[RMDB]
RNA sequence: GGGAACGACUCGAGUAGAGUCGAAAAGAUAUGGAGUAUGUAAGCACGCGUAGGACAUGAAGGAUAAACAUCGGAAACGAUGUGUAACUUCAACAGCCUACGCGUGCUUACCGCUACUCCUAAGUCACUUGAAACGUAAGUUCGCUUACGUUUCAAGAAAAGAAACAACAACAACAAC
Reactivity to DMS in 0.01 (KOAc 150mM, MgCl2 10mM, bicine 150mM(pH8.5), 24C), signal-to-noise 5, nucleotides 027 to 126: g020a070u000a300u010g000g000a040g010u000a000u010g010u000a010a020g010c000a000c010g020c000g010u000a000g000g000a030c090a270u000g010a000a000g010g020a160u000a140a220a010c000a000u000c000g010g000a140a130a300c000g000a010u000g000u000g010u010a080a300c020u000u000c000a010a040c300a190g000c000c000u000a000c010g010c000g020u000g000c000u010u000a000c000c020g000c000u010a020c000u000c000c010u000a020a060g010u000c040a250